This 177-nucleotide RNA was probed chemically with 2A3 and DMS. For 2A3 the reverse transcriptase was SuperScript II with manganese.
[RMDB]
RNA sequence: GGGAACGACUCGAGUAGAGUCGAAAAGGGGGAGCCCGGCGGCUCUCUGGUGUUCAAGCAGGAACCUCAUGCUACCGGCAGCAUGCGGCGCUUGCUUGAACAUCCCAGAGCCACCGGCGUGCCAAAAACCUAUACGUUCAUUCGUGAACGUAUAGGUAAAAGAAACAACAACAACAAC
Reactivity to 2A3 in 0.01 (KOAc 150mM, MgCl2 10mM, bicine 150mM(pH8.5), 24C), signal-to-noise 4, nucleotides 027 to 126: g030g010g000g000g020a040g020c010c000c000g000g000c010g000g000c000u000c000u000c030u020g000g000u000g000u000u000c000a000a000g000c000a000g010g010a050a090c000c000u010c000a010u000g000c010u060a130c040c100g140g010c020a000g000c000a000u000g000c030g010g000c030g010c040u010u000g000c000u000u000g000a000a000c000a000u000c000c000c000a000g000a000g000c000c000a000c000c000g000g000c020g010u030g060c010c010a080a070a010a020
Reactivity to DMS in 0.01 (KOAc 150mM, MgCl2 10mM, bicine 150mM(pH8.5), 24C), signal-to-noise 5, nucleotides 027 to 126: g020g000g000g020g020a220g010c090c000c000g000g020c030g010g000c000u010c000u000c110u010g000g010u000g010u000u010c000a000a010g010c000a000g000g020a030a030c000c000u010c000a010u000g000c000u010a090c060c050g010g020c060a190g000c000a010u000g000c090g000g010c300g000c000u000u000g010c010u010u000g000a000a000c000a000u000c010c040c240a000g000a000g000c010c000a030c000c000g000g000c120g000u020g000c030c050a060a090a070a110
For DMS the reverse transcriptase was MarathonRT.